This 177-nucleotide RNA was probed chemically with 2A3 and DMS. For 2A3 the reverse transcriptase was SuperScript II with manganese. DMS adducts were read by reverse transcription with MarathonRT. The RNA was probed in 150 mM KOAc, 10 mM MgCl2 and 150 mM bicine (pH 8.5) at 24 C.
RNA sequence: GGGAACGACUCGAGUAGAGUCGAAAAUCCACGUCCUUCGGGACGUGGAAAAUACGGCACGGGAGCCGAAGAAAUCCCGAAGCGCAGUGCAGCGCAGCUCAAAAAGGUGAGUCUUCGGACUCACCAACCCGGAUAAAAAGUUCGCUUUUUAUCCGGGAAAAGAAACAACAACAACAAC
Reactivity to 2A3 in 0.01 (KOAc 150mM, MgCl2 10mM, bicine 150mM(pH8.5), 24C), signal-to-noise 1, nucleotides 027 to 126: u000c000c000a020c000g010u020c000c050u010u080c180g070g040g000a000c000g000u030g000g000a000a000a000a000u080a010c040g000g000c010a020c030g050g010g040a000g000c060c050g060a040a030g150a030a040a020u000c010c000c000g000a130a030g020c000g000c070a110g120u180g190c060a070g020c050g000c010a010g010c000u070c110a040a130a030a040a030g000g010u000g000a000g000u000c000u000u060c140g100g000a000c000u010c000a000c000c000a010a010
Reactivity to DMS in 0.01 (KOAc 150mM, MgCl2 10mM, bicine 150mM(pH8.5), 24C), signal-to-noise 1, nucleotides 027 to 126: u000c000c000a010c040g000u010c000c000u000u000c200g030g050g000a020c000g070u000g000g000a000a000a030a070u020a270c000g010g000c010a160c060g000g040g010a060g050c000c000g090a060a090g000a080a090a150u010c000c030c020g000a180a240g010c030g030c010a120g000u020g020c170a060g000c010g030c020a080g030c090u000c100a030a110a080a150a110g000g000u000g000a040g010u000c000u000u000c150g030g000a010c010u000c000a000c000c000a000a020